[RMDB]
RNA sequence: GGGAACGACUCGAGUAGAGUCGAAAAUUUGCUAGCUGUCAUAGUUUAUGACUCGAGGUUAAAUCGUUCAAUUUAACCUUUAAAAAUAGAACUUGUUGUUUCCAUGAUUGUUUUGUGAUCAAUUGGAAACAAGACAAAAAUCCACAAAACUAAAAUGCUUAGUAGGGACGUUCGCGUCCCUACUAAGAAAAGAAACAACAACAACAAC
Reactivity to 2A3 in 0.01 (KOAc 150mM, MgCl2 10mM, bicine 150mM(pH8.5), 24C), signal-to-noise 1, nucleotides 027 to 156: u080u070u150g070c020u040a160g010c060u020g000u000c000a020u010a130g140u190u230u230a080u020g010a000c000u000c010g010a010g000g000u000u000a000a000a000u040c020g000u000u000c000a000a010u000u000u000a000a010c000c000u000u000u000a020a030a020a030a000u240a040g000a000a000c000u000u040g000u000u000g000u000u010u000c000c010a000u010g010a040u070u080g020u020u010u010u020g010u000g010a020u080c150a120a120u040u000g020g000a120a110a110c010a020a010g010a000c030a000a130a010a020a020u070c030c000a010c010a010a000a000a000c010u050a090a080a030a080u060g000

Chemical mapping of a 207-nucleotide RNA with 2A3.
For 2A3 the reverse transcriptase was SuperScript II with manganese.
High 2A3 reactivity points to a flexible backbone, as in loops and unpaired stretches.
Conditions: 150 mM KOAc, 10 mM MgCl2 and 150 mM bicine (pH 8.5), 24 C.
Source: RMDB library ARCHII, as collected in RNAgym.